This 207-nucleotide RNA was probed chemically with DMS and 2A3. The data come from the RNA Mapping Database (RMDB), library OK3TST. In probing experiments dimethyl sulfate is read out at A N1 and C N3, which are open when not base-paired. Conditions: 150 mM KOAc, 10 mM MgCl2 and 150 mM bicine (pH 8.5), 24 C.
RNA sequence: GGGAACGACUCGAGUAGAGUCGAAAAGCUAUGUUACGAUUAUGUGACUUGCCAUAAUCGGAGGUACUCGACUCCGUAACAUAGGUCGAGUGGCUGUCCGUACUGGCAAGUCACAGUACGACAGUCGUCGAGUCCUGACUGUGACAGCCCUCAGGAACGAAUCAUGCUAGUUCGCUAGCAUGAUUCGAAAAGAAACAACAACAACAAC
Reactivity to DMS in 0.01 (KOAc 150mM, MgCl2 10mM, bicine 150mM(pH8.5), 24C), signal-to-noise 1, nucleotides 027 to 156: g050c030u000a070u010g000u000u000a070c040g070a090u020u000a070u000g000u000g030a060c030u000u000g000c100c020a000u000a040a170u000c050g030g000a300g020g000u000a050c020u000c040g080a030c030u000c050c080g010u000a050a110c170a220u010a050g020g020u000c020g010a050g010u000g050g010c000u000g000u020c030c030g000u000a130c230u000g000g010c000a000a010g000u000c000a000c000a000g020u000a050c040g000a260c000a100g020u000c040g000u000c050g030a080g020u020c000c020u010g020a070c100u000g060u020g000a150c180a100g040c000c000c020u000c020a080g000g000a090a300
Reactivity to 2A3 in 0.01 (KOAc 150mM, MgCl2 10mM, bicine 150mM(pH8.5), 24C), signal-to-noise 2, nucleotides 027 to 156: g050c030u070a080u220g040u120u120a060c040g030a040u120u060a100u120g000u000g000a000c000u000u000g000c000c010a060u090a100a070u100c000g010g000a000g020g040u010a010c020u010c010g000a000c010u070c070c040g170u080a090a010c040a120u260a070g050g060u010c000g000a000g010u000g040g050c010u070g240u070c010c000g020u010a010c060u010g010g010c000a000a010g020u000c000a000c000a000g000u010a000c050g030a020c010a050g030u010c010g010u040c040g090a050g040u000c000c020u030g010a000c030u040g020u040g130a020c040a010g070c000c000c000u040c050a040g090g000a050a070